[RMDB]
RNA sequence: GGGAACGACUCGAGUAGAGUCGAAAAGAUAUGGACCACCCAGGCUUUUGACGCGGAUUCGGAAACGAAAUCGCGAUAAGCCUGGUGGUCCUAAGUCAAAAUCCGUAACACUUCGGUGUUACGGAAAGUCUAAAUAAUUGUUCGCAAUUAUUUAGACAAAAGAAACAACAACAACAAC
Reactivity to DMS in 0.01 (KOAc 150mM, MgCl2 10mM, bicine 150mM(pH8.5), 24C), signal-to-noise 8, nucleotides 027 to 126: g000a020u000a210u010g000g010a010c000c000a000c170c140c260a020g010g010c000u000u000u010u010g010a250c020g010c000g000g010a060u000u000c000g000g000a050a040a080c000g010a000a000a040u000c000g020c000g010a050u010a020a030g020c000c000u000g000g020u000g000g000u000c000c000u000a000a050g000u000c020a110a070a120a140u000c000c000g000u000a000a000c000a010c000u000u010c190g020g010u000g000u000u000a000c000g000g000a000a010a040
Reactivity to 2A3 in 0.01 (KOAc 150mM, MgCl2 10mM, bicine 150mM(pH8.5), 24C), signal-to-noise 7, nucleotides 027 to 126: g000a000u030a010u070g000g000a000c010c010a020c070c140c040a010g010g000c030u180u240u280u300g100a040c000g000c000g020g010a010u010u000c000g000g000a020a010a010c010g000a000a010a030u030c010g000c020g080a100u110a240a030g000c000c000u000g000g000u000g000g010u000c000c000u000a000a000g000u000c010a010a000a010a270u000c000c000g000u000a000a000c000a000c000u050u060c150g170g000u000g000u000u000a000c000g000g000a020a010a000
An RNA of 177 nucleotides, treated with DMS and 2A3 and read out base by base. Source: RMDB library TTRDEL, as collected in RNAgym. For DMS, 16,428 sequencing reads were counted.